[RMDB]
RNA sequence: GGGAACGACUCGAGUAGAGUCGAAAACCUCAGUUCGCUGAGGAAAGAUAUGGAAUGAAUAGUAGUCGCCAGUCGGAAACGACUGAAGCGAGCUACAUUCCUAAGUCAAAAGAUGCCUUCGGGCAUCCACUAAAUACUACUUCGGUAGUAUUUAGUGAAAAGAAACAACAACAACAAC
Reactivity to DMS in 0.01 (KOAc 150mM, MgCl2 10mM, bicine 150mM(pH8.5), 24C), signal-to-noise 9, nucleotides 027 to 126: c000c000u000c010a000g010u000u020c250g040c010u000g010a020g010g000a070a090a090g010a060u010a300u000g000g000a020a010u000g000a160a160u000a020g020u000a080g010u000c000g010c010c010a010g000u000c000g010g010a150a140a250c000g010a020c000u000g000a070a090g030c000g010a030g000c000u000a030c000a010u000u000c000c000u000a060a160g000u010c060a090a110a110a160g010a010u000g010c000c000u000u010c230g020g010g010c010a000u000c010
Reactivity to 2A3 in 0.01 (KOAc 150mM, MgCl2 10mM, bicine 150mM(pH8.5), 24C), signal-to-noise 8, nucleotides 027 to 126: c000c000u000c000a020g020u080u140c290g010c140u010g010a020g010g050a220a130a020g070a050u150a070u180g000g030a020a010u020g030a240a130u060a120g080u020a050g240u030c000g000c010c000a000g000u000c000g000g040a070a080a080c010g000a000c000u010g020a100a020g000c000g000a010g000c000u000a010c000a010u000u000c000c000u050a180a060g080u060c070a080a030a050a160g000a000u010g010c000c010u060u130c300g040g000g000c000a000u000c010